[RMDB]
RNA sequence: GGGAACGACUCGAGUAGAGUCGAAAAGUGCCGGCAAUACAGUGUGUAUGGAGGUCUCAAUGGCUCGGAUGUGCCAGCAAACCGGCGUAGAUAUUAGCAGACGUAUGGGCGUAAGACUUUUAUUGAAAAAAGUACAUAAGCUUCGGCUUAUGUACAAUCUCGCUUAUAAGUUCGCUUAUAAGCGAGAAAAAGAAACAACAACAACAAC
Reactivity to DMS in 0.01 (KOAc 150mM, MgCl2 10mM, bicine 150mM(pH8.5), 24C), signal-to-noise 3, nucleotides 027 to 156: g000u000g030c010c010g030g000c030a130a100u010a050c060a110g040u000g010u000g020u000a040u000g000g030a120g020g020u000c010u000c050a090a100u000g030g000c020u000c040g020g020a160u000g040u010g010c010c000a070g000c030a040a180a050c020c010g010g050c030g010u000a090g010a100u010a130u000u000a080g020c080a140g000a100c050g020u000a080u000g010g000g040c040g040u010a090a130g010a080c040u010u000u010u010a120u010u050g010a030a050a080a110a080a200g010u000a000c000a000u000a000a010g030c000u010u000c300g070g030c000u010u000a000u000g010u000a000c000a020a060
Reactivity to 2A3 in 0.01 (KOAc 150mM, MgCl2 10mM, bicine 150mM(pH8.5), 24C), signal-to-noise 2, nucleotides 027 to 156: g060u050g020c010c000g000g010c040a050a030u030a040c030a060g050u020g000u010g010u230a050u040g040g040a040g020g060u000c010u010c080a070a150u090g030g010c040u040c070g160g000a120u110g000u050g040c030c010a020g030c090a000a030a050c010c000g010g000c010g000u020a030g040a050u030a050u160u150a010g000c050a020g010a080c010g060u070a060u100g020g090g000c030g030u040a050a010g020a020c010u000u090u120u150a170u050u140g000a200a000a020a000a000a040g010u000a000c000a000u010a000a010g000c000u030u040c210g040g030c000u000u010a000u000g000u010a000c000a000a010
Chemical mapping of a 207-nucleotide RNA with DMS and 2A3.